This 177-nucleotide RNA was probed chemically with DMS and 2A3. For DMS, 2,172 sequencing reads were counted. For 2A3, 3,364 sequencing reads were counted.
RNA sequence: GGGAACGACUCGAGUAGAGUCGAAAAGAUAUGGAAGCCGCCCUGGAGCUCCGGGAUCGGAAACGAUCCCAGGAGCUAUGAAGGUAACAAGCUUCCUAAGUCAAAGGUCCGACUUCGGUCGGACCAAGUAAUGAAUGAACUUCGGUUCAUUCAUUACAAAAGAAACAACAACAACAAC
Reactivity to DMS in 0.01 (KOAc 150mM, MgCl2 10mM, bicine 150mM(pH8.5), 24C), signal-to-noise 2, nucleotides 027 to 126: g000a040u000a270u010g000g000a010a010g020c010c250g020c200c120c010u000g000g010a050g010c010u000c000c020g000g000g000a010u000c000g010g010a070a050a130c000g020a000u010c000c000c000a010g020g000a010g020c000u000a010u010g000a130a110g000g000u000a050a070c130a080a210g010c000u000u000c000c000u000a030a100g010u010c040a070a140a150g000g000u000c000c010g010a010c000u000u010c200g020g000u000c000g000g000a000c010c000a000a030
Reactivity to 2A3 in 0.01 (KOAc 150mM, MgCl2 10mM, bicine 150mM(pH8.5), 24C), signal-to-noise 1, nucleotides 027 to 126: g000a010u030a020u070g000g000a000a000g020c040c030g040c050c040c000u060g040g100a040g000c000u000c000c010g010g000g000a000u000c000g020g010a110a020a020c010g000a020u080c040c010c090a010g010g000a000g010c000u000a000u020g000a000a000g000g020u060a090a100c100a140a110g000c000u000u000c000c000u030a060a000g010u020c060a150a070a110g030g000u000c000c010g000a000c010u040u130c300g080g000u000c000g000g000a010c000c000a010a000